[RMDB]
RNA sequence: GGGAACGACUCGAGUAGAGUCGAAAAAGCUUAGAAGCAGCUACCCUCUAAGAAAAGCGUAACAGCUUACCGGCCGAGGUUCGGGGCGCCCAAAAUGAUCGGGGCUCAAAUCCACCACCGAGACCUGAGGUAGCAUCAUGUUCGCAUGAUGCUACCUAAAAGAAACAACAACAACAAC
Reactivity to DMS in 0.01 (KOAc 150mM, MgCl2 10mM, bicine 150mM(pH8.5), 24C), signal-to-noise 1, nucleotides 027 to 126: a020g010c000u000u000a040g030a200a000g030c140a100g000c000u000a040c280c020c000u000c200u030a160a030g010a030a010a020a030g000c020g000u000a110a070c140a180g030c010u000u020a100c140c080g000g000c140c080g020a200g000g000u000u010c060g020g000g020g010c140g040c000c030c000a010a000a070a080u020g010a030u000c180g020g000g000g000c020u000c010a130a150a100u030c000c010a110c080c010a130c020c020g000a130g000a000c000c030u000g000
Reactivity to 2A3 in 0.01 (KOAc 150mM, MgCl2 10mM, bicine 150mM(pH8.5), 24C), signal-to-noise 3, nucleotides 027 to 126: a020g020c010u020u000a070g080a140a020g070c090a000g040c010u100a100c000c020c020u040c030u090a100a080g070a070a210a000a000g040c040g010u060a040a040c020a050g000c030u060u070a060c040c020g050g080c030c060g060a060g040g080u000u090c080g020g000g000g020c030g090c000c000c050a020a170a040a090u210g020a070u110c040g000g000g020g010c000u000c050a040a090a000u000c010c020a040c000c000a020c010c010g020a040g030a050c000c040u030g030
Chemical mapping of a 177-nucleotide RNA with DMS and 2A3. It was measured as part of the RMDB library RFM100. For DMS, 1,125 sequencing reads were counted. Conditions: 150 mM KOAc, 10 mM MgCl2 and 150 mM bicine (pH 8.5), 24 C. Reactivities are given for positions 27 through 126. For 2A3, 1,138 sequencing reads were counted.